RNA sequence: GGGAACGACUCGAGUAGAGUCGAAAACAGCAUUGUACUGAUACCAAAACAGAGAUAUAGAUCAAUGCAACAGAACAGAGGCCUCAGAAAUAACACCACACAUCUACAACCAUCUGAUCUUUGACAAACCUGACAAAAAGAAGAAAUGGGGAAAGGACAUAACUGGGAAUUUCGAUUCCCAGUUAUGAAAAGAAACAACAACAACAAC
Reactivity to 2A3 in 0.01 (KOAc 150mM, MgCl2 10mM, bicine 150mM(pH8.5), 24C), signal-to-noise 4, nucleotides 027 to 156: c020a010g020c010a020u030u050g030u110a080c020u050g050a060u110a170c040c020a050a070a080a030c070a060g100a010g050a070u080a020u070a150g070a090u070c010a020a000u030g020c020a020a030c020a050g100a060a020c020a020g070a020g060g030c010c040u050c040a010g100a010a120a050u120a040a030c020a020c040c020a040c010a010c000a090u010c020u090a040c040a050a050c020c020a000u030c030u040g040a030u030c030u080u070u060g010a020c030a040a070a050c010c020u020g030a020c030a020a120a010a030a010g050a040a010g040a030a100a040u070g000g000g020g010a010a130a030g040g010a000
Reactivity to DMS in 0.01 (KOAc 150mM, MgCl2 10mM, bicine 150mM(pH8.5), 24C), signal-to-noise 2, nucleotides 027 to 156: c080a110g010c020a080u000u000g020u000a130c030u010g020a160u000a090c020c020a060a130a130a300c140a180g030a140g000a130u000a050u000a030g000a060u000c030a030a020u010g010c020a070a140c080a110g010a060a050c080a110g040a120g010g020c060c010u000c020a130g020a100a110a090u020a080a040c000a120c050c000a050c060a070c020a070u000c050u010a050c050a060a060c000c000a030u020c070u010g020a090u010c020u000u000u000g020a110c020a050a060a080c040c020u000g000a090c080a020a030a040a040a110g000a130a100g010a060a030a050u000g020g000g020g000a030a050a100g010g020a160
This 207-nucleotide RNA was probed chemically with 2A3 and DMS. For 2A3 the reverse transcriptase was SuperScript II with manganese. The reactions ran in a buffer of 150 mM KOAc, 10 mM MgCl2 and 150 mM bicine (pH 8.5), at 24 C. For 2A3, 2,310 sequencing reads were counted. It was measured as part of the RMDB library OK3TST.